[RMDB]
RNA sequence: GGGAACGACUCGAGUAGAGUCGAAAAGCGGUCCGACGCGGUCCGCAGCGUCGCCCGGUUGGGACCCAGUCGUUCACACCGCCACGGUAUCGGCUCGCGGCCACGGUGCGCUGGGUAUCCUGGGGCCGGAUCACCUCCCAUUCGUGGGAGGUGAUCCAAAAGAAACAACAACAACAAC
Reactivity to DMS in 0.01 (KOAc 150mM, MgCl2 10mM, bicine 150mM(pH8.5), 24C), signal-to-noise 1, nucleotides 027 to 126: g000c090g030g050u020c120c020g010a040c050g020c040g000g000u010c030c130g020c040a100g010c030g030u000c060g000c300c000c000g000g020u010u020g020g000g030a060c000c000c010a020g000u020c080g050u010u000c110a070c010a110c120c080g000c040c020a030c020g020g000u010a130u000c110g000g000c020u000c040g000c020g000g020c030c110a130c200g000g000u010g020c000g030c000u000g000g020g000u010a060u000c010c010u010g000g010g000g040c250c110
Reactivity to 2A3 in 0.01 (KOAc 150mM, MgCl2 10mM, bicine 150mM(pH8.5), 24C), signal-to-noise 2, nucleotides 027 to 126: g010c010g040g010u030c010c040g030a100c070g050c060g070g030u020c040c040g000c080a010g030c000g040u110c040g040c010c000c020g130g000u220u160g050g000g030a000c010c000c010a010g090u170c040g000u090u120c030a030c000a000c070c020g040c000c020a050c080g070g000u170a250u300c070g120g030c100u080c040g080c000g010g000c050c020a110c060g020g030u010g000c000g000c000u020g020g000g020u020a160u010c000c000u000g000g020g000g070c000c040

Overview: The record gives the reactivity of an RNA of 177 nucleotides to DMS and 2A3. For DMS the reverse transcriptase was MarathonRT. It was measured as part of the RMDB library OK2TST. The RNA was probed in 150 mM KOAc, 10 mM MgCl2 and 150 mM bicine (pH 8.5) at 24 C. The DMS profile rests on 1,213 reads.